An RNA of 207 nucleotides, treated with 2A3 and DMS and read out base by base. DMS adducts were read by reverse transcription with MarathonRT. The RNA was probed in 150 mM KOAc, 10 mM MgCl2 and 150 mM bicine (pH 8.5) at 24 C. It was measured as part of the RMDB library OK3TST. For 2A3 the reverse transcriptase was SuperScript II with manganese.
RNA sequence: GGGAACGACUCGAGUAGAGUCGAAAAUUCACUUACCAAUUGUAUGGGAUAAGUUAUAAUAGGAUCUCCCAUUUUACAGCUGAGGAAGCUGAGAAAGCCAAGGCUCAGAGAGGUCACACAUCUAGCAAGUGGCAGAGCCAGAAUUUGAAUAACAUGACUAGCUAAAUACGUUCGCGUAUUUAGCUAGAAAAGAAACAACAACAACAAC
Reactivity to 2A3 in 0.01 (KOAc 150mM, MgCl2 10mM, bicine 150mM(pH8.5), 24C), signal-to-noise 1, nucleotides 027 to 156: u020u000c020a020c020u030u030a010c010c020a070a050u160u220g060u100a140u200g020g000g040a100u060a110a060g010u010u120a080u110a230a150u150a140g100g030a030u040c030u010c020c010c000a010u040u060u010u100a060c020a000g000c000u040g020a020g040g150a070a010g000c010u000g000a090g100a090a070a000g050c080c050a060a110g040g000c000u030c050a010g070a000g000a050g290g000u020c010a000c000a000c000a090u070c050u120a080g090c090a300a050g040u000g030g020c040a050g010a000g080c020c000a000g020a030a030u100u070u070g050a090a060u170a150a000c040a120u090g090a090
Reactivity to DMS in 0.01 (KOAc 150mM, MgCl2 10mM, bicine 150mM(pH8.5), 24C), signal-to-noise 2, nucleotides 027 to 156: u000u010c040a100c030u000u030a100c010c010a070a130u000u010g080u000a150u000g030g030g010a070u010a050a140g010u020u000a120u010a120a190u000a120g040g010a100u000c090u000c020c000c000a300u030u010u000u000a220c000a020g010c000u020g010a300g030g060a290a070g000c020u010g030a280g000a090a090a090g020c010c000a060a190g010g010c030u010c040a070g010a070g010a100g030g030u000c020a130c140a120c080a100u000c050u010a130g060c030a080a060g070u000g000g050c090a070g020a080g050c040c020a150g010a060a120u010u000u000g010a080a150u000a080a060c080a040u000g010a220